Structure probing data (DMS and 2A3) for a 207-nucleotide construct. For DMS, 11,624 sequencing reads were counted. The data come from the RNA Mapping Database (RMDB), library OK3TST. Reactivities are rounded to 0.1 and cut off at 0 and 3. DMS adducts were read by reverse transcription with MarathonRT. Conditions: 150 mM KOAc, 10 mM MgCl2 and 150 mM bicine (pH 8.5), 24 C.
RNA sequence: GGGAACGACUCGAGUAGAGUCGAAAAUUGGCGACCUUGCGGUCCUUCGAACGCUUGAGCUGUGCCAUGCCUACUCUCCGAUCAGGUUCUCGAGGUCACAGAGCACACGGGUCCAGUAGUCGGUAGACCCGAUGCCUGUCUUGCAGUCCAUGGCCGCGUACGAUCAAUAAUUCGUUAUUGAUCGUACAAAAGAAACAACAACAACAAC
Reactivity to DMS in 0.01 (KOAc 150mM, MgCl2 10mM, bicine 150mM(pH8.5), 24C), signal-to-noise 3, nucleotides 027 to 156: u000u000g030g010c020g000a040c010c010u010u000g010c060g030g010u010c010c080u000u010c060g000a040a070c040g030c000u000u000g010a130g020c010u000g030u010g080c020c020a060u000g010c080c000u010a070c030u000c010u000c040c030g000a110u010c050a130g020g020u000u000c060u000c020g000a090g000g000u000c010a080c040a100g000a130g010c030a040c040a120c000g020g000g030u000c020c020a130g030u000a110g020u010c070g020g010u000a070g010a040c010c000c020g020a070u000g010c010c000u010g010u000c040u000u000g020c020a130g020u010c050c030a100u000g010g010c000c030g000c130
Reactivity to 2A3 in 0.01 (KOAc 150mM, MgCl2 10mM, bicine 150mM(pH8.5), 24C), signal-to-noise 7, nucleotides 027 to 156: u070u020g020g000c020g010a060c010c010u020u050g020c040g020g060u120c030c030u110u130c130g070a100a030c020g020c030u050u060g050a060g050c080u100g060u120g140c010c020a030u060g010c000c000u030a050c010u020c000u000c020c010g030a070u050c050a040g020g100u040u020c020u020c030g040a050g030g000u030c020a010c010a020g030a030g020c020a030c010a060c050g000g010g000u010c020c020a070g090u120a030g120u240c130g030g020u040a040g010a020c000c000c000g000a000u010g000c000c010u030g000u040c050u060u120g030c050a040g030u000c040c010a060u070g040g000c010c010g040c010